[RMDB]
RNA sequence: GGGAACGACUCGAGUAGAGUCGAAAAGAAGGGAAAGGAGAUCCAUGGACAGUCUCCAGAGGUUCCUAAGGCCUCGGUCGCGCCUGCCGGGAGGCAGAAUGUCCCGGUUGUCCAUGAAAGAAGAAGAAGCUAGUGAUUAGUUCGCUAAUCACUAGCUAAAAGAAACAACAACAACAAC
Reactivity to 2A3 in 0.01 (KOAc 150mM, MgCl2 10mM, bicine 150mM(pH8.5), 24C), signal-to-noise 5, nucleotides 027 to 126: g080a030a050g100g030g040a060a130a050g040g030a020g010a010u010c060c040a010u020g010g000a010c010a010g030u010c000u010c010c050a010g020a020g040g020u090u120c020c030u080a070a040g060g000c000c000u020c040g030g040u160c100g020c040g000c090c000u010g000c000c010g000g010g000a000g000g000c050a050g170a150a070u140g040u020c000c000c000g000g000u000u030g000u000c000c000a000u040g070a030a080a040g170a040a000g060a030a020g030a040
Reactivity to DMS in 0.01 (KOAc 150mM, MgCl2 10mM, bicine 150mM(pH8.5), 24C), signal-to-noise 4, nucleotides 027 to 126: g000a100a110g010g000g010a040a110a090g000g000a010g020a030u000c160c050a020u010g000g010a030c000a030g020u000c030u010c010c000a070g000a060g000g010u010u000c060c110u020a080a140g000g010c000c010u030c070g000g020u000c100g000c240g000c010c000u000g020c010c020g000g000g000a040g010g000c040a100g010a080a080u050g010u000c000c000c000g010g000u030u000g020u000c010c000a000u010g020a100a080a100g030a110a110g010a110a170g030a080